Chemical mapping of a 177-nucleotide RNA with DMS and 2A3.
[RMDB]
RNA sequence: GGGAACGACUCGAGUAGAGUCGAAAAUGGAUUAUGCUAGUGACCAUCAAGACAAGCUAUAUACGCCUCCUACUAUUAGCUACAACUCUACAUUGCAAGCAGGUUUGCGUAAAAUGGCGCAGCCCUCCAGUAACACGUGUUUCGACACGUGUUACUGAAAAGAAACAACAACAACAAC
Reactivity to DMS in 0.01 (KOAc 150mM, MgCl2 10mM, bicine 150mM(pH8.5), 24C), signal-to-noise 4, nucleotides 027 to 126: u000g020g020a090u000u000a070u000g020c060u010a060g030u000g010a090c030c020a050u000c110a070a110g010a080c130a100a090g000c030u000a040u010a090u010a110c090g010c030c050u000c030c010u000a080c100u010a090u000u010a030g010c020u000a070c110a060a060c110u000c080u020a040c080a080u010u000g010c050a060a050g010c080a050g000g010u000u000u000g010c020g000u000a030a040a080a100u020g000g010c020g020c040a070g010c010c000c040u010c050
Reactivity to 2A3 in 0.01 (KOAc 150mM, MgCl2 10mM, bicine 150mM(pH8.5), 24C), signal-to-noise 3, nucleotides 027 to 126: u080g020g040a020u040u070a070u190g040c040u050a030g030u010g030a070c010c000a010u040c060a080a020g060a100c030a100a020g020c040u020a010u020a000u030a240c060g020c010c010u010c020c000u010a010c010u040a060u150u070a020g000c010u000a020c030a070a050c020u040c010u070a050c030a120u040u110g060c030a050a040g040c000a010g040g060u070u110u050g000c000g010u030a020a070a090a210u120g050g020c010g000c030a020g000c010c000c020u010c030